[RMDB]
RNA sequence: GGGAACGACUCGAGUAGAGUCGAAAACCCGUACCUCGGGUUUCCGUCUUGCUCGUAUCGCUCGAGAACGCAAGUUCUUCAGCGAAAAGCACGACAGUGGUCGCUACAUAGCGUGGUUCCAUACUGGAGGUGAAAUCACCGACAGCAUGAAGUCCGCGGUUGCUUCAAGGUUCGCCUUGAAGCAACCAAAAGAAACAACAACAACAAC
Reactivity to 2A3 in 0.01 (KOAc 150mM, MgCl2 10mM, bicine 150mM(pH8.5), 24C), signal-to-noise 1, nucleotides 027 to 156: c010c010c010g040u180a210c090c120u170c010g000g000g000u000u000u000c070c000g000u000c010u030u040g000c000u000c060g030u170a130u060c010g050c010u060c050g010a020g030a000a030c040g030c140a170a000g000u000u000c010u030u010c000a010g000c000g040a040a040a000a000g040c030a000c050g050a010c040a020g070u090g140g030u040c050g050c070u060a090c060a210u190a130g020c000g050u050g030g010u080u010c000c000a000u030a100c000u000g020g020a040g000g010u010g050a200a240a000u300c020a000c010c000g020a020c000a000g020c000a010u040g030a070a020g070u000c020c030g020c030